[RMDB]
RNA sequence: GGGAACGACUCGAGUAGAGUCGAAAAGCUGGCGCUCGGUGCGGCAACACUUUUCGCGGAUACCGGAGCCUACGGGCCGGCGUCGAUCGCCGCCGCCGCAGCGAUGCUGCACAUGAUUGCGCACGCGCGGUAAUAGCCGUUUCGACGGCUAUUACCGAAAAGAAACAACAACAACAAC
Reactivity to 2A3 in 0.01 (KOAc 150mM, MgCl2 10mM, bicine 150mM(pH8.5), 24C), signal-to-noise 7, nucleotides 027 to 126: g050c040u080g020g000c010g010c020u020c020g030g020u030g000c000g040g010c010a080a050c030a070c090u140u190u220u240c110g000c010g000g030a030u070a210c040c030g040g050a050g030c010c010u040a080c180g040g000g010c050c020g010g000c000g020u060c090g050a150u130c070g010c030c010g000c000c010g020c000c000g000c050a020g020c020g020a030u060g000c020u030g030c000a010c010a110u170g050a220u120u180g010c020g000c010a050c040g010c000g000
Reactivity to DMS in 0.01 (KOAc 150mM, MgCl2 10mM, bicine 150mM(pH8.5), 24C), signal-to-noise 2, nucleotides 027 to 126: g000c010u020g020g000c030g030c000u000c010g020g010u010g000c010g010g000c000a030a070c070a030c120u020u010u030u040c170g000c030g030g010a150u010a070c280c060g000g000a200g030c030c030u000a100c150g000g000g010c130c030g010g010c000g000u010c150g010a180u030c010g000c020c030g000c090c020g000c000c020g020c030a040g000c030g020a130u000g020c020u000g000c000a020c060a030u020g000a020u010u020g010c000g030c010a030c060g000c020g010